[RMDB]
RNA sequence: GGGAACGACUCGAGUAGAGUCGAAAAGAUAUGGAUGCUUUCCGAUAAGCUGAGGUUCGGAAACGAACCCAGCUUUUGACGGAAUCAUCCUAAGUCAAACGUGGGGUGUCUUCGGACACCCCACGAAGCAUACUAUUAUGUUCGCAUAAUAGUAUGCAAAAGAAACAACAACAACAAC
Reactivity to 2A3 in 0.01 (KOAc 150mM, MgCl2 10mM, bicine 150mM(pH8.5), 24C), signal-to-noise 3, nucleotides 027 to 126: g010a010u040a010u070g000g000a000u010g020c080u040u040u060c010c010g100a180u100a300a000g000c010u010g070a140g130g000u010u010c010g000g030a070a020a010c010g010a000a000c000c000c000a000g020c030u030u030u030u080g060a000c000g000g010a000a000u010c000a000u000c000c000u000a050a010g020u040c020a070a060a070c030g000u010g020g010g000g020u000g000u020c040u160u170c300g170g000a020c000a000c000c000c010c020a000c000g000a000a000
Reactivity to DMS in 0.01 (KOAc 150mM, MgCl2 10mM, bicine 150mM(pH8.5), 24C), signal-to-noise 5, nucleotides 027 to 126: g010a030u000a240u010g000g000a010u000g010c210u000u000u000c000c000g000a180u000a040a030g010c000u000g010a130g020g010u000u000c000g010g000a050a070a130c000g010a010a010c000c000c000a000g010c000u000u000u000u000g010a220c240g000g000a030a010u000c000a000u000c000c000u000a020a090g000u000c030a070a100a220c010g020u000g010g000g010g020u000g000u000c000u000u020c220g000g010a010c000a000c000c000c000c000a000c000g000a020a050